[RMDB]
Record summary: The data come from the RNA Mapping Database (RMDB), library 15KLIB. This 170-nucleotide RNA was probed chemically with DMS and 2A3.

RNA sequence: GGGAACGACUCGAGUAGAGUCGAAAAGUGAAACUUCCGUCUGCACCUCAGACUAUCCAGCCCGAGGUAAAAGAAGUUGCACCUGUCUAUGAGGCUGAUACCGAACAGACACAGAAUGUUACUGUUAGAGCGGGUAACUUCGGUUACCCGAAAAGAAACAACAACAACAAC
Reactivity to DMS in 0.01 (KOAc 150mM, MgCl2 10mM, bicine 150mM(pH8.5), 24C), signal-to-noise 5, nucleotides 027 to 129: g020u000g010a070a030a060c030u060u000c020c100g020u000c120u040g050c000a130c040c060u030c010a030g020a080c000u030a140u050c180c170a060g020c000c000c070g020a060g020g020u010a050a040a100a080g040a000a030g020u020u040g030c050a050c040c000u040g020u000c040u030a080u000g040a270g000g000c100u060g000a170u050a210c010c010g000a190a020c080a010g030a090c000a060c160a140g040a100a080u050g000u010u000a120c030u070g020u000u010a000g040a080g010
Reactivity to 2A3 in 0.01 (KOAc 150mM, MgCl2 10mM, bicine 150mM(pH8.5), 24C), signal-to-noise 5, nucleotides 027 to 129: g040u030g010a040a000a020c010u000u000c000c030g050u020c010u010g070c070a110c040c030u090c000a000g020a010c010u020a050u110c050c030a020g010c000c000c020g020a050g000g000u020a010a010a000a020g000a000a010g010u020u030g020c010a020c020c070u060g010u040c030u060a110u100g060a030g050g010c080u040g050a050u100a110c010c030g000a020a000c010a000g020a010c010a000c010a120g190a150a110u170g030u120u100a070c040u020g040u100u080a060g000a050g150
For DMS, 12,605 sequencing reads were counted.